[RMDB]
RNA sequence: GGGAACGACUCGAGUAGAGUCGAAAAGAAGCGUUCUACAAUAUGACGGAGUGUAAAUGCCUAUGUAUCAAGCUAUGGUAAGUCUGAUACUUAGGCAUUUACACUCCGUCAUAUUGCGGAACGCAAACAUUACUUGUAGCUUCGGCUACAAGUAAUGAAAAGAAACAACAACAACAAC
Reactivity to DMS in 0.01 (KOAc 150mM, MgCl2 10mM, bicine 150mM(pH8.5), 24C), signal-to-noise 4, nucleotides 027 to 126: g020a140a120g010c000g000u010u000c000u000a120c000a010a010u000a010u000g000a010c000g010g000a030g010u000g000u000a000a010a010u000g000c000c000u000a010u010g000u000a000u000c000a010a040g000c010u010a120u020g030g010u040a110a020g020u000c050u010g000a010u000a000c000u000u000a000g000g010c000a000u000u000u000a000c000a000c000u000c000c010g000u000c000a000u010a000u000u000g020c040g000g000a010a000c000g020c000a000a020a120
Chemical mapping of a 177-nucleotide RNA with DMS. It was measured as part of the RMDB libraries RFM100 and RFMREP. The RNA was probed in 150 mM KOAc, 10 mM MgCl2 and 150 mM bicine (pH 8.5) at 24 C.